[RMDB]
This 177-nucleotide RNA was probed chemically with DMS and 2A3. It was measured as part of the RMDB library OK1LIB. The reactions ran in a buffer of 150 mM KOAc, 10 mM MgCl2 and 150 mM bicine (pH 8.5), at 24 C. For 2A3 the reverse transcriptase was SuperScript II with manganese. For DMS, 811 sequencing reads were counted. DMS adducts were read by reverse transcription with MarathonRT.
RNA sequence: GGGAACGACUCGAGUAGAGUCGAAAAAUACCUCCACAGAGGCAGUUGGCGAUACAAUACAACGUAAAUAGAGUGACGAUUAUUAAAAGUAUUGAGUUAUUAGAGGCUGAAGGAUUUAUCUAUACUACCCUAACCGAAUGUUCGCAUUCGGUUAGGGAAAAGAAACAACAACAACAAC
Reactivity to DMS in 0.01 (KOAc 150mM, MgCl2 10mM, bicine 150mM(pH8.5), 24C), signal-to-noise 1, nucleotides 027 to 126: a030u020a110c070c000u010c040c070a060c080a160g070a150g100g010c000a190g010u030u040g000g000c010g000a080u010a000c000a000a020u010a120c120a210a060c130g000u000a030a080a090u040a030g000a080g010u000g000a080c070g030a030u000u000a030u070u010a000a070a030a210g030u030a000u000u020g030a150g060u040u000a070u010u000a060g000a090g000g000c000u080g000a150a090g010g030a000u000u010u000a030u040c220u000a080u080a110c120u060a020
Reactivity to 2A3 in 0.01 (KOAc 150mM, MgCl2 10mM, bicine 150mM(pH8.5), 24C), signal-to-noise 2, nucleotides 027 to 126: a000u070a030c000c000u030c000c010a190c010a070g100a000g000g080c010a000g090u030u000g120g000c010g000a000u010a170c000a010a010u000a000c110a110a030c100g020u130a050a140a000u160a110g170a100g100u000g100a000c030g020a060u020u070a000u090u300a260a240a000a000g010u000a060u000u150g040a130g100u070u070a060u010u100a050g010a000g040g000c020u020g070a030a080g060g000a020u000u080u150a050u050c000u100a210u050a230c030u100a110